The record gives the reactivity of an RNA of 177 nucleotides to DMS and 2A3.
The data come from the RNA Mapping Database (RMDB), library TTRDES.
DMS (dimethyl sulfate) methylates the pairing face of unpaired adenines and cytosines.
RNA sequence: GGGAACGACUCGAGUAGAGUCGAAAAGAUAUGGAGAUUGUGAAGGCAACAGCUCAUGUCUCGGAAACGAGAUUUGAGACAUGCCUUACAAUCUCCUAAGUCAAAGCCCGGACUUCGGUCCGGGCAACACAAGACUAGUCUUCGGACUAGUCUUGUGAAAAGAAACAACAACAACAAC
Reactivity to DMS in 0.01 (KOAc 150mM, MgCl2 10mM, bicine 150mM(pH8.5), 24C), signal-to-noise 1, nucleotides 027 to 126: g000a040u010a110u000g000g000a010g030a000u000u000g000u000g010a020a030g020g020c000a100a070c220a090g000c000u000c010a000u000g000u010c000u000c000g030g000a010a030a040c010g030a000g010a010u000u000u000g000a010g020a020c100a300u020g000c020c000u000u000a020c000a010a000u000c000u010c000c000u000a000a030g000u000c010a100a140a130g020c030c000c000g010g010a050c010u000u010c210g010g010u000c000c000g030g000g010c000a010a020
Reactivity to 2A3 in 0.01 (KOAc 150mM, MgCl2 10mM, bicine 150mM(pH8.5), 24C), signal-to-noise 2, nucleotides 027 to 126: g000a010u020a010u090g000g000a010g000a000u000u010g020u110g170a050a030g060g020c110a300a050c090a300g020c010u020c010a010u030g010u000c000u000c010g010g030a020a000a000c000g000a010g010a010u010u010u010g010a020g020a000c030a140u300g000c000c010u000u010a000c000a000a000u010c000u010c000c000u000a010a010g000u010c000a110a060a090g000c030c010c000g000g000a010c000u050u100c300g090g000u000c010c030g030g000g000c010a000a000